[RMDB]
RNA sequence: GGGAACGACUCGAGUAGAGUCGAAAACAGGGAUCUUAAAUUAAGGAAUUGAAUACGCCAGUGAUAUCAUUGAUUUAGGGGCUUGUGACAAUAUCCACUCUUAAUACUCCUGGGAUUUUGGAGAAACUCUAGUUUAGAGAUUCGUCUCUAAACUAGAAAAAGAAACAACAACAACAAC
Reactivity to 2A3 in 0.01 (KOAc 150mM, MgCl2 10mM, bicine 150mM(pH8.5), 24C), signal-to-noise 3, nucleotides 027 to 126: c010a020g120g030g070a200u050c030u070u120a070a130a140u110u030a070a030g070g040a070a120u120u070g030a120a060u150a130c030g060c110c060a060g020u020g060a050u030a020u150c060a050u030u120g020a030u040u070u060a050g000g000g000g030c050u040u070g020u030g030a040c030a100a080u040a070u090c010c000a080c020u050c000u000u090a100a070u070a240c010u000c000c000u010g000g070g120a200u160u200u120u190g030g000a050g040a080a030a020c020
Reactivity to DMS in 0.01 (KOAc 150mM, MgCl2 10mM, bicine 150mM(pH8.5), 24C), signal-to-noise 4, nucleotides 027 to 126: c040a050g010g010g000a130u000c010u000u000a030a020a050u000u000a040a060g000g010a080a080u010u010g010a120a110u010a080c120g030c110c090a040g010u000g000a100u000a040u000c020a080u000u000g000a030u000u000u000a040g020g010g010g010c020u010u000g020u010g020a100c110a070a070u010a170u010c010c020a070c160u000c040u010u000a050a080u000a090c040u000c020c010u000g000g000g000a130u000u000u010u000g000g010a090g010a120a090a090c190
Chemical mapping of a 177-nucleotide RNA with 2A3 and DMS. It was measured as part of the RMDB library OK2TRN. The DMS profile rests on 3,918 reads.